[RMDB]
RNA sequence: GGGAACGACUCGAGUAGAGUCGAAAACUCAACUCGUUCGCGAGUUGAGAAACCCGAUGAAGCGCCACUUAGACAGCUUCAUACACCUAAGAAAAGUGCUAAAAAGAAAACGGUUCGCCGUUUUCAACCUAAUAGGAUGCUUCGGCAUCCUAUUAGGAAAAGAAACAACAACAACAAC
Reactivity to DMS in 0.01 (KOAc 150mM, MgCl2 10mM, bicine 150mM(pH8.5), 24C), signal-to-noise 2, nucleotides 027 to 126: c000u000c000a020a030c010u000c000g020u000u020c190g030c020g040a030g010u000u000g000a010g010a000a070a120c000c010c000g050a070u010g020a100a010g050c000g010c060c030a130c230u010u020a160g010a040c060a130g020c040u010u000c000a030u000a130c170a070c030c060u010a100a110g010a060a130a110a060g000u010g000c210u000a080a030a050a130a190g000a010a000a000a010c010g010g000u000u020c230g010c000c000g010u000u010u000u000c000a020a150
Reactivity to 2A3 in 0.01 (KOAc 150mM, MgCl2 10mM, bicine 150mM(pH8.5), 24C), signal-to-noise 2, nucleotides 027 to 126: c000u000c000a010a010c000u020c000g020u040u020c130g010c020g070a000g030u000u000g000a010g010a020a020a000c020c020c000g010a010u060g000a010a010g000c030g010c030c030a120c100u070u030a030g060a110c030a040g030c000u030u000c000a000u030a010c080a010c000c030u100a130a040g090a150a180a030a000g040u040g010c090u180a220a110a050a020a020g000a000a010a000a030c000g000g070u050u020c270g000c080c010g000u010u000u000u000c000a000a020
Chemical mapping of a 177-nucleotide RNA with DMS and 2A3. The RNA was probed in 150 mM KOAc, 10 mM MgCl2 and 150 mM bicine (pH 8.5) at 24 C. For DMS the reverse transcriptase was MarathonRT. Source: RMDB library M2PK50, as collected in RNAgym.